[RMDB]
RNA sequence: GGGAACGACUCGAGUAGAGUCGAAAAGCGUGGCAGUUCGCUGCCACGCAAAUAAAAACGAGGAGCGGUAGGCCUGGAAAAAUGCCGCAAGAUCAAAGAUCAAAAGGCCAACGUUCGCGUUGGCCAAGUCUAUAACGGAGUUCGCUCCGUUAUAGACAAAAGAAACAACAACAACAAC
Reactivity to 2A3 in 0.01 (KOAc 150mM, MgCl2 10mM, bicine 150mM(pH8.5), 24C), signal-to-noise 2, nucleotides 027 to 126: g000c000g000u010g000g030c010a000g010u040u060c160g060c100u000g020c010c000a010c000g000c010a030a000a000u000a000a010a000a000a000c060g010a030g040g040a060g040c010g000g040u030a030g010g130c030c070u060g080g030a150a170a040a050a030u040g010c000c000g050c020a020a030g030a010u110c080a130a110a050g020a060u060c050a000a060a110a100g010g010c000c000a000a000c000g010u050u070c260g010c000g060u000u000g010g000c000c000a000a000
Reactivity to DMS in 0.01 (KOAc 150mM, MgCl2 10mM, bicine 150mM(pH8.5), 24C), signal-to-noise 2, nucleotides 027 to 126: g010c000g070u010g000g000c000a000g020u000u050c250g020c010u000g020c000c000a000c010g000c000a010a010a020u000a060a060a030a080a130c120g000a040g000g010a180g000c000g000g000u000a050g030g030c000c000u000g030g000a000a040a050a050a060u010g000c020c000g020c040a040a060g010a030u000c070a130a090a140g010a070u000c050a050a030a130a100g000g000c000c010a000a010c020g000u010u000c240g000c000g030u000u000g010g030c020c010a000a010
An RNA of 177 nucleotides, treated with 2A3 and DMS and read out base by base. For 2A3 the reverse transcriptase was SuperScript II with manganese. The 2A3 profile rests on 3,386 reads. For DMS the reverse transcriptase was MarathonRT. For DMS, 1,882 sequencing reads were counted. It was measured as part of the RMDB library M2PK50.